[RMDB]
RNA sequence: GGGAACGACUCGAGUAGAGUCGAAAAAAGGCGUCGGAGCACCCUUUUAGAGGUGUGACGGCGUGCCUUUUGUAGAAUGAGCCAGCGAGUUGCUGGCCGUCGGCGAGGUUAAGCUGGAAAGCGAGCCACACUGAGCCUACUUCGGUAGGCUCAGUGUAAAAGAAACAACAACAACAAC
Reactivity to 2A3 in 0.01 (KOAc 150mM, MgCl2 10mM, bicine 150mM(pH8.5), 24C), signal-to-noise 2, nucleotides 027 to 126: a000a000g040g000c010g000u000c000g000g020a010g000c000a010c000c000c000u080u200u060u210a060g040a020g000g000u000g010u000g030a010c000g000g010c030g010u040g000c000c020u040u000u000u070g010u010a070g030a170a060u080g050a010g010c000c000a000g000c000g040a140g300u200u260g200c000u000g000g040c000c000g000u000c000g010g030c030g040a000g030g000u060u090a130a030g000c000u000g090g100a100a070a050g030c000g010a010g030c000c010
Reactivity to DMS in 0.01 (KOAc 150mM, MgCl2 10mM, bicine 150mM(pH8.5), 24C), signal-to-noise 3, nucleotides 027 to 126: a000a000g000g010c010g030u000c010g000g000a300g000c000a000c000c000c010u000u040u050u040a070g020a130g010g010u010g000u000g000a300c000g010g010c000g000u020g010c010c010u000u000u000u010g000u020a070g000a080a040u010g010a170g040c020c010a010g000c020g030a200g030u030u010g000c040u000g000g000c000c000g010u000c040g000g000c070g010a060g010g010u000u000a060a190g040c000u000g000g010a090a090a040g010c010g010a160g000c020c020

Conditions: 150 mM KOAc, 10 mM MgCl2 and 150 mM bicine (pH 8.5), 24 C. Structure probing data (2A3 and DMS) for a 177-nucleotide construct. The data come from the RNA Mapping Database (RMDB), libraries RFM100 and RFMREP.